[RMDB]
RNA sequence: GGGAACGACUCGAGUAGAGUCGAAAAGAUAUGGAGCCACGGACGAGUACCUCUCGGAAACGAGAGAAGUACGAUGAGUCCUGUGGCUCCUAAGUCAAAAGAACAGAUGGCUUCGGCCAUCUGUUCACAAAAGGAGAGAGUUCGCUCUCUCCUUUUGAAAAGAAACAACAACAACAAC
Reactivity to 2A3 in 0.01 (KOAc 150mM, MgCl2 10mM, bicine 150mM(pH8.5), 24C), signal-to-noise 2, nucleotides 027 to 126: g010a000u010a010u060g000g000a000g000c010c010a000c000g000g020a020c060g020a040g050u010a010c000c010u000c000u000c000g000g000a020a010a000c000g000a000g000a000g030a150a040g020u000a000c000g030a080u300g080a030g000u010c010c020u020g000u020g000g030c030u010c010c000u000a010a010g010u000c010a000a000a020a150g010a010a000c000a000g000a000u000g010g010c060u200u180c300g060g000c020c000a000u000c000u010g010u010u000c000a000
Reactivity to DMS in 0.01 (KOAc 150mM, MgCl2 10mM, bicine 150mM(pH8.5), 24C), signal-to-noise 5, nucleotides 027 to 126: g000a010u000a040u010g000g000a020g010c000c010a010c010g000g020a020c010g000a070g020u000a000c010c000u000c000u000c000g010g000a010a010a030c010g000a010g000a010g000a090a120g030u000a010c000g010a180u020g000a300g010u000c010c000u020g060u000g000g010c010u000c000c000u000a000a060g000u000c010a120a110a170a140g010a020a000c000a000g000a020u000g000g010c000u000u020c300g030g010c000c000a000u000c000u000g010u000u000c000a090